RNA sequence: GGGAACGACUCGAGUAGAGUCGAAAACUUGAGGCAAGGAGUUUGAGACCAGCCUGGGCAACAUAGUGAGACUCCAUCUGUACAGGAAAUUAUGAUAAAGACUUCAUUCCUUUAGGGCUGAAUAAUAACGUACUCUUCGGUUCGCCGAAGAGUACGUAAAAGAAACAACAACAACAAC
Reactivity to DMS in 0.01 (KOAc 150mM, MgCl2 10mM, bicine 150mM(pH8.5), 24C), signal-to-noise 1, nucleotides 027 to 126: c040u000u000g030a060g020g080c130a100a140g010g010a060g020u000u000u000g020a190g090a060c060c020a020g000c020c010u020g020g000g040c030a000a030c060a060u000a020g020u000g020a070g010a060c080u000c030c090a020u010c020u000g000u000a020c080a090g020g000a060a030a100u000u030a050u010g000a120u000a060a130a120g000a100c090u000u010c020a030u000u000c000c000u000u000u000a070g020g010g030c130u000g010a010a020u010a060a130u030a070

Chemical mapping of a 177-nucleotide RNA with DMS. For DMS, 773 sequencing reads were counted.